[RMDB]
RNA sequence: GGGAACGACUCGAGUAGAGUCGAAAACCGAGCUCAGCUGAUGCGGCCUCCGUUCUGCGCGGGCUCGGGGAGACUCUCGGCCGCAUCGGAACGUCGCGAAACGGCGAAUCGCUGCCUAAGAAGACGGCAUCCAUGAGGACUUCGGUCCUCAUGGAUGAAAAGAAACAACAACAACAAC
Reactivity to 2A3 in 0.01 (KOAc 150mM, MgCl2 10mM, bicine 150mM(pH8.5), 24C), signal-to-noise 4, nucleotides 027 to 126: c000c000g000a000g000c030u050c030a080g000c010u030g010a020u020g010c000g000g000c030c030u060c030c060g040u070u110c080u140g130c110g030c090g030g020g000c010u010c000g000g010g010g000a060g070a030c020u010c020u030c140g000g000c000c000g000c000a000u010c000g000g010a090a030c030g030u050c020g020c030g140a080a000a120c060g020g000c030g030a030a050u070c070g020c080u140g020c010c030u100a100a060g060a080a020g010a050c010g020g010
Reactivity to DMS in 0.01 (KOAc 150mM, MgCl2 10mM, bicine 150mM(pH8.5), 24C), signal-to-noise 2, nucleotides 027 to 126: c000c000g010a050g000c070u000c020a200g060c000u030g030a000u050g000c000g000g000c030c010u030c030c020g020u000u000c030u000g010c140g000c110g000g010g000c030u000c060g040g010g000g010a180g000a110c040u020c010u020c030g030g080c000c000g030c050a040u020c060g000g000a050a110c060g000u000c000g000c090g000a090a080a140c130g030g000c000g000a090a070u030c090g000c090u000g040c010c040u010a050a240g000a130a070g010a040c100g000g000
Source: RMDB library OK1LIB, as collected in RNAgym.
The record gives the reactivity of an RNA of 177 nucleotides to 2A3 and DMS.
The RNA was probed in 150 mM KOAc, 10 mM MgCl2 and 150 mM bicine (pH 8.5) at 24 C.
High 2A3 reactivity points to a flexible backbone, as in loops and unpaired stretches.